[RMDB]
RNA sequence: GGGAACGACUCGAGUAGAGUCGAAAAUAAGUUCGAAGCUGAGUGACAGGGUUGGGUCUAUGAUUGACAGCACCGCAUCGAGCACAGUAAGUAACGCCCUUCUGCACACAUUCGCACCGUCUGGUUGCUUUCGAGAUGUAUGAGCGUCGAAGCUUCGCGGGGAGAAAGUUUUCGAACUUUCUCCCCGAAAAGAAACAACAACAACAAC
Reactivity to 2A3 in 0.01 (KOAc 150mM, MgCl2 10mM, bicine 150mM(pH8.5), 24C), signal-to-noise 1, nucleotides 027 to 156: u140a020a000g040u050u060c000g010a000a000g020c010u020g060a050g060u110g010a030c010a030g100g000g030u140u100g090g020g040u000c030u040a190u200g120a130u080u100g000a080c000a050g040c020a060c060c070g040c000a040u040c020g030a040g000c060a030c050a060g100u240a170a010g000u010a000a150c010g030c000c050c000u070u000c020u020g100c000a000c000a010c000a160u130u070c050g000c020a050c080c000g120u080c130u100g020g000u120u050g060c040u000u130u110c110g030a070g010a090u100g040u090a120u100g080a050g010c010g010u020c020g060a030a000g010c010u000u020c030g000
Reactivity to DMS in 0.01 (KOAc 150mM, MgCl2 10mM, bicine 150mM(pH8.5), 24C), signal-to-noise 1, nucleotides 027 to 156: u000a060a090g020u000u030c000g010a080a100g000c000u000g000a160g020u010g040a160c040a090g040g030g000u010u000g010g020g000u010c020u010a090u030g000a120u010u000g060a070c120a140g040c050a140c060c020g000c040a160u020c020g040a090g020c040a060c050a130g020u030a030a040g000u010a030a080c080g040c040c010c040u000u010c030u000g000c040a090c050a100c040a090u010u000c080g000c000a100c010c000g000u000c110u000g000g060u010u010g020c020u000u000u000c030g000a140g010a110u010g020u010a170u000g000a070g010c030g070u000c040g020a160a110g010c030u000u020c060g020
Record summary
The record gives the reactivity of an RNA of 207 nucleotides to 2A3 and DMS.